[RMDB]
RNA sequence: GGGAACGACUCGAGUAGAGUCGAAAACGGCCUGGCUUCGGCCAGGCCGAAAGUUGCAUUUUACGCCAAGAAAUCCCGGAACAUUGGCCCGGAAGCCUGAGAAAAGAGUACUGUUCGCAGUACUCAAGUACGGUUAUAAGUUCGCUUAUAACCGUACAAAAGAAACAACAACAACAAC
Reactivity to DMS in 0.01 (KOAc 150mM, MgCl2 10mM, bicine 150mM(pH8.5), 24C), signal-to-noise 3, nucleotides 027 to 126: c030g040g010c020c010u000g000g010c000u000u000c220g030g030c020c020a020g010g030c010c000g000a010a020a080g020u000u000g000c080a060u000u000u020u010a050c120g020c040c050a060a070g000a100a130a090u000c020c000c000g000g000a040a050c100a140u010u000g010g000c020c070c070g000g010a120a120g000c040c040u010g000a090g010a090a140a090a110g000a010g000u000a000c000u000g000u000u000c220g030c000a000g000u000a010c000u000c000a000a090
Reactivity to 2A3 in 0.01 (KOAc 150mM, MgCl2 10mM, bicine 150mM(pH8.5), 24C), signal-to-noise 2, nucleotides 027 to 126: c010g000g010c010c010u030g010g010c020u080u070c150g070g000c010c010a000g020g020c000c000g020a000a020a000g020u000u110g000c000a000u000u000u040u160a050c060g000c030c020a060a050g030a130a150a070u050c000c000c000g000g050a050a030c020a150u000u100g030g000c010c010c020g050g060a070a020g010c000c050u140g050a090g120a140a130a000a060g000a000g010u000a000c000u010g050u080u090c280g020c120a000g000u000a010c000u000c000a000a000
The record gives the reactivity of an RNA of 177 nucleotides to DMS and 2A3. Reactivities are given for positions 27 through 126. DMS adducts were read by reverse transcription with MarathonRT.